[RMDB]
RNA sequence: GGGAACGACUCGAGUAGAGUCGAAAAGAGUAGCAGUUGUCCUCUGCCACCCACCUUCCGUAAUCGUGAGUAAGGUUCAUUGAGCUGCGCGUCGCAGCACCGAACCAGCGAGUGAGCGAGGCUAACACGCAUGAUGGGGAUUCGUCCCCAUCAUGCGAAAAGAAACAACAACAACAAC
Reactivity to DMS in 0.01 (KOAc 150mM, MgCl2 10mM, bicine 150mM(pH8.5), 24C), signal-to-noise 2, nucleotides 027 to 126: g000a090g000u010a110g000c100a070g000u000u020g030u000c090c040u000c030u000g000c000c050a080c000c030c020a130c120c050u000u030c090c010g020u000a120a090u000c050g020u030g010a070g010u010a050a110g000g010u000u010c010a280u000u000g000a070g030c000u000g010c030g030c250g000u000c090g040c010a030g010c000a010c180c190g010a020a010c000c010a190g000c050g010a060g050u020g000a110g050c060g010a010g000g000c030u020a030a080c210a150
Reactivity to 2A3 in 0.01 (KOAc 150mM, MgCl2 10mM, bicine 150mM(pH8.5), 24C), signal-to-noise 2, nucleotides 027 to 126: g100a040g090u220a000g070c110a050g020u120u120g110u180c000c000u000c060u070g070c000c020a010c010c000c000a070c020c000u060u000c090c010g090u110a110a300u100c050g000u050g010a050g080u120a180a120g060g020u010u000c020a020u120u230g130a000g140c030u000g030c060g070c120g200u090c180g000c020a010g080c000a000c000c050g000a000a010c030c000a000g030c020g020a000g020u020g000a060g060c010g010a020g000g150c010u000a050a020c050a010